An RNA of 177 nucleotides, treated with DMS and 2A3 and read out base by base. The 2A3 profile rests on 4,690 reads. DMS adducts were read by reverse transcription with MarathonRT. It was measured as part of the RMDB library OK1LIB. The reactions ran in a buffer of 150 mM KOAc, 10 mM MgCl2 and 150 mM bicine (pH 8.5), at 24 C. For 2A3 the reverse transcriptase was SuperScript II with manganese.
RNA sequence: GGGAACGACUCGAGUAGAGUCGAAAAGUGAAGAGUUAACACUGUGACUUUAGAUGCAUUUUUCUCAGUGUAAGUGUCUGAGCUCAUCUCCAGUUCUGGACUCGUGCCCCCACUCCCGGGUGCUGACGCGUGGACCUCACUUCGGUGAGGUCUACGCAAAAGAAACAACAACAACAAC
Reactivity to DMS in 0.01 (KOAc 150mM, MgCl2 10mM, bicine 150mM(pH8.5), 24C), signal-to-noise 3, nucleotides 027 to 126: g000u010g010a120a030g030a060g000u010u000a090a050c050a010c020u010g000u020g000a050c120u000u010u030a020g000a070u030g000c140a070u020u010u010u010u010c000u000c040a060g000u030g000u020a050a120g000u010g010u000c030u020g000a170g020c140u000c040a110u000c060u000c030c050a060g000u000u010c070u010g000g010a040c050u010c050g000u000g010c020c010c010c040c050a120c100u000c010c010c020g010g000g000u010g010c030u000g000a210c210
Reactivity to 2A3 in 0.01 (KOAc 150mM, MgCl2 10mM, bicine 150mM(pH8.5), 24C), signal-to-noise 6, nucleotides 027 to 126: g130u110g040a090a090g050a070g050u050u120a060a000c040a000c060u030g050u080g070a040c030u100u130u140a100g020a100u130g050c090a140u080u080u020u130u030c020u010c010a010g020u020g020u120a130a070g060u070g060u080c030u050g020a020g010c010u030c020a090u010c040u000c010c020a020g020u050u040c030u090g020g040a040c010u010c050g030u070g020c010c010c000c030c000a060c040u020c000c000c000g010g000g040u080g010c030u020g020a030c070